Structure probing data (2A3 and DMS) for a 177-nucleotide construct. The RNA was probed in 150 mM KOAc, 10 mM MgCl2 and 150 mM bicine (pH 8.5) at 24 C. 2A3 adducts were read by reverse transcription with SuperScript II with manganese.

RNA sequence: GGGAACGACUCGAGUAGAGUCGAAAAGCCGAUACAGCACUUAAAACAGCUGACUCAGGAUAUCUUACUCGUCGUCUUGUUGACGUGGCACAAGAUGUUAUUGUUCGUGAAGAAGACUGUGGUACUGCGUCUGACUAGUCUUCGGACUAGUCAGACGAAAAGAAACAACAACAACAAC
Reactivity to 2A3 in 0.01 (KOAc 150mM, MgCl2 10mM, bicine 150mM(pH8.5), 24C), signal-to-noise 2, nucleotides 027 to 126: g010c000c010g060a070u030a060c020a050g030c010a060c140u040u090a010a100a020a120c170a140g010c000u000g000a060c030u050c040a060g000g000a070u000a080u050c040u020u030a100c000u000c070g050u010c020g000u000c060u110u100g000u000u070g090a080c060g120u030g090g000c040a000c000a030a100g020a060u030g010u030u070a220u070u140g060u070u090c080g020u080g000a070a000g000a080a060g010a050c020u000g040u000g060g040u030a070c000u080g010
Reactivity to DMS in 0.01 (KOAc 150mM, MgCl2 10mM, bicine 150mM(pH8.5), 24C), signal-to-noise 1, nucleotides 027 to 126: g000c070c000g000a080u020a000c000a150g000c020a070c140u040u000a090a020a200a070c240a000g000c000u000g010a170c050u080c060a140g000g000a100u000a080u000c000u010u020a110c030u010c030g000u000c110g000u020c070u080u000g010u000u000g000a010c060g010u000g000g000c100a000c200a050a070g000a000u000g020u000u040a000u100u010g060u010u020c060g000u000g000a060a110g000a100a090g060a100c170u050g000u020g000g000u050a070c010u050g060
For 2A3, 795 sequencing reads were counted. DMS adducts were read by reverse transcription with MarathonRT.